Chemical mapping of a 207-nucleotide RNA with 2A3.
The RNA was probed in 150 mM KOAc, 10 mM MgCl2 and 150 mM bicine (pH 8.5) at 24 C.
Source: RMDB library M2RFPK, as collected in RNAgym.
RNA sequence: GGGAACGACUCGAGUAGAGUCGAAAAAGCCGAUCAGUUACGACUGAUCGGCACGGGGUCGGGCAGGCACCCCAUCAGACGGUUCUCCGUCUAAGUUCGGUAGAGCGCUCGGUACGCCGAGGGCUCAAGUACGAGGGUCACUUCGGUGACCCUCGAAGGAUUAAGGGAGAUUCGUCUCCCUUAAUCCAAAAGAAACAACAACAACAAC
Reactivity to 2A3 in 0.01 (KOAc 150mM, MgCl2 10mM, bicine 150mM(pH8.5), 24C), signal-to-noise 1, nucleotides 027 to 156: a000g030c010c000g000a000u000c000a000g000u000u010a050c220g000a000c170u000g000a000u000c000g000g000c000a000c020g000g010g000g000u040c070g050g170g150c100a050g010g060c020a090c000c000c000c020a060u170c080a010g020a020c000g000g080u300u090c270u020c040c030g000u020c030u000a020a010g090u050u150c060g000g130u050a050g010a000g000c090g010c100u010c020g000g000u010a030c250g040c100c000g000a000g000g110g010c000u000c010a030a000g060u080a100c000g000a000g000g050g000u000c010a040c050u040u090c180g010g000u010g000a000c010c000c010u000c000g000a000a000